RNA sequence: GGGAACGACUCGAGUAGAGUCGAAAAUUGCUGGUGAAUACUCUGGUCUACUACAUUCCAUUCGUUGGUAGAUUACCAAUGGUCGGAACCAUUAACAAUCUGAUCUGGUUUGUCGCCACUCUCCUCCUGAUUAUCCUCGUCUACGUUGCCAGCGACACACAAUAACAGUGUUCGCACUGUUAUUGUGAAAAGAAACAACAACAACAAC
Reactivity to DMS in 0.01 (KOAc 150mM, MgCl2 10mM, bicine 150mM(pH8.5), 24C), signal-to-noise 5, nucleotides 027 to 156: u010u000g020c020u000g010g030u000g000a110a110u000a060c040u000c070u010g030g020u000c020u010a070c020u000a070c060a140u000u000c060c080a200u000u000c090g030u000u000g040g010u000a030g010a130u000u000a040c020c020a050a020u000g000g020u000c050g040g010a090a160c050c040a070u010u000a110a120c090a060a090u000c040u000g000a080u000c040u000g010g010u010u000u000g020u000c050g010c000c030a080c050u000c030u000c040c010u000c020c020u000g010a130u010u010a090u010c030c020u000c040g010u000c030u000a070c110g020u000u000g000c000c030a110g010c020g010a170c070a180
Reactivity to 2A3 in 0.01 (KOAc 150mM, MgCl2 10mM, bicine 150mM(pH8.5), 24C), signal-to-noise 7, nucleotides 027 to 156: u100u050g000c020u010g010g030u050g060a090a020u080a100c030u030c040u100g000g030u020c010u030a050c010u030a030c050a080u080u070c070c020a060u060u140c080g040u060u030g030g000u040a130g030a300u100u120a020c010c010a040a060u080g020g030u040c050g020g030a060a080c040c000a070u090u120a080a060c050a060a080u040c040u070g020a030u020c040u030g070g010u050u080u110g120u050c020g010c020c010a030c020u040c010u010c020c020u040c010c020u040g040a100u030u120a030u080c010c030u040c010g040u020c050u020a060c080g070u050u060g030c000c010a030g030c010g020a000c020a000

This 207-nucleotide RNA was probed chemically with DMS and 2A3.
Source: RMDB library OK3TST, as collected in RNAgym.